[RMDB]
Structure probing data (DMS) for a 177-nucleotide construct. Values cover nucleotides 27 to 126. The data come from the RNA Mapping Database (RMDB), library OK2TST. The reactions ran in a buffer of 150 mM KOAc, 10 mM MgCl2 and 150 mM bicine (pH 8.5), at 24 C.

RNA sequence: GGGAACGACUCGAGUAGAGUCGAAAAUUGUCGUGCUGUCAGUGCAGUACCAGGCGUUGAAGAUCUCUGGGCCCUCUAUGGGGUUGGAGCUUCCUGACCUUCUCUUGGACUGCAAGGGCCCUAUUGAGUUUCCUGAGUCAUUCGUGACUCAGGAAACAAAAGAAACAACAACAACAAC
Reactivity to DMS in 0.01 (KOAc 150mM, MgCl2 10mM, bicine 150mM(pH8.5), 24C), signal-to-noise 1, nucleotides 027 to 126: u010u000g000u010c040g080u020g000c090u000g020u000c110a080g070u000g000c020a040g000u000a080c030c050a040g000g010c190g000u000u010g000a080a050g000a060u000c040u010c040u000g020g010g010c000c010c000u000c190u000a140u000g000g030g010g030u020u000g020g000a100g010c170u000u010c030c100u000g000a090c200c030u000u000c030u000c020u000u000g000g000a100c030u000g010c110a060a050g030g030g010c000c090c040u000a030u000u000g010a300